Description
This 177-nucleotide RNA was probed chemically with DMS and 2A3. In probing experiments dimethyl sulfate is read out at A N1 and C N3, which are open when not base-paired. The reactions ran in a buffer of 150 mM KOAc, 10 mM MgCl2 and 150 mM bicine (pH 8.5), at 24 C. Reactivities are given for positions 27 through 126.
[RMDB]
RNA sequence: GGGAACGACUCGAGUAGAGUCGAAAAGCUUCAAGGGCUCCAGUAGCCAAAGAGGCUAUUCCAGCUGGUUUGUGCUGGCACCAACACUGGCACCAGCAUGCUACGGAGCUGCUGCCUCUACGCAAGGAUCCAAAUACGAGUUCGCUCGUAUUUGGAUAAAAGAAACAACAACAACAAC
Reactivity to DMS in 0.01 (KOAc 150mM, MgCl2 10mM, bicine 150mM(pH8.5), 24C), signal-to-noise 6, nucleotides 027 to 126: g010c030u000u000c030a120a230g000g020g000c010u000c010c150a140g020u010a010g010c010c050a030a090a200g000a090g010g020c010u010a060u000u010c200c040a110g000c030u000g010g020u000u000u010g010u000g020c020u000g010g010c080a130c040c030a030a100c300a090c190u000g010g020c070a150c010c010a020g010c000a060u000g000c090u000a040c090g000g010a070g020c010u000g000c120u000g010c050c010u000c060u000a060c140g000c100a090a080g000g010
Reactivity to 2A3 in 0.01 (KOAc 150mM, MgCl2 10mM, bicine 150mM(pH8.5), 24C), signal-to-noise 4, nucleotides 027 to 126: g010c010u090u070c090a070a120g170g010g000c020u000c030c040a110g040u150a010g000c000c010a080a050a010g060a020g010g000c000u030a080u130u050c030c000a010g000c020u060g040g090u070u180u220g050u050g000c010u010g010g000c020a040c000c020a090a050c130a040c220u060g020g000c010a020c020c000a000g000c010a020u110g000c020u040a050c040g080g050a020g010c010u040g020c010u030g010c010c000u010c020u050a040c070g020c070a050a020g100g010